Background
This 177-nucleotide RNA was probed chemically with DMS. It was measured as part of the RMDB library TTRINS.
RNA sequence: GGGAACGACUCGAGUAGAGUCGAAAAGAUAUGGACAGGCCGAAAUGACACUUCGACGAAGUACAGUGGUCUCGGAAACGAGACGUAACAUCUGUACAGAGAAGGUCAUUUCGGCCUGUCCUAAGUCGACUUCACUAGGGUUCGCCCUAGUGAAGUCAAAAGAAACAACAACAACAAC
Reactivity to DMS in 0.01 (KOAc 150mM, MgCl2 10mM, bicine 150mM(pH8.5), 24C), signal-to-noise 1, nucleotides 027 to 126: g000a080u000a290u010g010g000a000c030a000g000g000c010c000g000a000a000a000u000g000a050c000a200c000u000u000c000g000a280c260g010a160a190g010u010a000c000a020g010u000g020g000u000c000u010c000g020g000a070a130a210c000g000a030g000a000c000g000u010a040a110c160a050u010c000u000g000u030a010c000a070g000a230g000a000a010g000g000u000c000a010u010u000u000c000g010g000c000c000u010g000u000c000c000u010a000a050g000u010c040